[RMDB]
RNA sequence: GGGAACGACUCGAGUAGAGUCGAAAACAGGCUGCUGCAGCUAUGUAUAAAGAGGCUAGAGCUGUUAAUAGGAAGUCUAAAGUUAUUGGCGCUAUGCAUGCUUUGCUUUUUAGUAUGUUGCGCAAACCAAGGAGCUCAAAUUCGUUUGAGCUCCUUGAAAAGAAACAACAACAACAAC
Reactivity to DMS in 0.01 (KOAc 150mM, MgCl2 10mM, bicine 150mM(pH8.5), 24C), signal-to-noise 3, nucleotides 027 to 126: c090a090g010g000c030u010g010c030u000g020c020a020g010c010u000a060u010g020u000a110u000a060a090a100g000a080g020g000c020u010a080g010a040g000c010u000g000u010u010a070a120u020a070g010g010a050a080g020u010c020u010a070a100a120g010u000u010a140u000u010g010g010c000g020c010u000a040u010g000c020a020u000g010c010u000u000u000g010c130u010u010u000u000u010a050g000u000a010u000g020u010u000g000c010g010c020a050a070a070c180
Reactivity to 2A3 in 0.01 (KOAc 150mM, MgCl2 10mM, bicine 150mM(pH8.5), 24C), signal-to-noise 2, nucleotides 027 to 126: c030a010g060g000c050u030g000c010u060g020c040a020g030c010u060a030u150g060u040a150u070a170a130a010g080a020g050g000c070u090a030g040a020g140c020u020g020u080u080a080a070u120a160g090g110a050a030g030u040c030u140a160a050a060g120u170u110a170u220u260g090g000c030g000c040u030a000u160g040c010a020u040g000c000u110u030u000g050c020u140u170u060u040u010a000g000u000a000u100g020u060u110g000c000g020c020a040a000a020c040
Structure probing data (DMS and 2A3) for a 177-nucleotide construct. Conditions: 150 mM KOAc, 10 mM MgCl2 and 150 mM bicine (pH 8.5), 24 C. 2A3 adducts were read by reverse transcription with SuperScript II with manganese.